[RMDB]
Structure probing data (2A3 and DMS) for a 207-nucleotide construct.
Reactivities are given for positions 27 through 156.
It was measured as part of the RMDB library OK3TST.
For DMS, 16,093 sequencing reads were counted.
2A3 adducts were read by reverse transcription with SuperScript II with manganese.
The reactions ran in a buffer of 150 mM KOAc, 10 mM MgCl2 and 150 mM bicine (pH 8.5), at 24 C.

RNA sequence: GGGAACGACUCGAGUAGAGUCGAAAAGGUUUGGCCAGAUGGCUCUAUUAGGACGACUGCAAGACUCGGCGCUGCCGGACUGUCUUUUUGCAGAUAUUUUAGGUGUCGAUUGUUACAUCCUAGUGAGUGAGAGGACGUGGUAUAGGCAGUCCUGGAAUAUACGUACCAUAUUCGUAUGGUACGUAUAAAAAGAAACAACAACAACAAC
Reactivity to 2A3 in 0.01 (KOAc 150mM, MgCl2 10mM, bicine 150mM(pH8.5), 24C), signal-to-noise 5, nucleotides 027 to 156: g070g000u040u040u100g060g000c050c020a050g040a160u130g040g010c020u000c030u050a140u070u100a040g040g020a020c040g020a030c040u030g000c050a020a030g000a060c030u030c050g030g000c250g110c290u220g020c000c010g020g060a080c090u070g000u030c000u010u120u030u050u120g020c020a020g090a070u040a110u100u120u050u090a050g010g010u020g000u060c040g070a090u030u130g020u070u060a040c020a050u050c010c010u010a040g040u030g080a020g030u050g020a050g000a010g060g000a010c050g030u040g000g030u090a060u050a090g040g000c010a010g010u030c010c010u010g000g030a040a010
Reactivity to DMS in 0.01 (KOAc 150mM, MgCl2 10mM, bicine 150mM(pH8.5), 24C), signal-to-noise 4, nucleotides 027 to 156: g010g020u000u000u000g040g010c020c020a140g010a150u010g010g020c040u000c040u000a080u010u000a080g010g010a120c030g020a170c030u010g040c020a090a100g000a080c030u000c030g030g010c030g010c070u000g030c040c020g040g010a070c040u010g010u000c000u000u000u000u000u000g010c050a080g010a100u000a030u000u000u000u000a090g040g010u000g000u000c020g010a170u010u000g010u000u010a090c040a050u000c010c010u010a060g020u000g010a150g020u000g000a120g020a100g030g010a050c020g020u000g020g020u000a070u000a080g010g010c030a070g010u000c030c020u010g000g010a080a200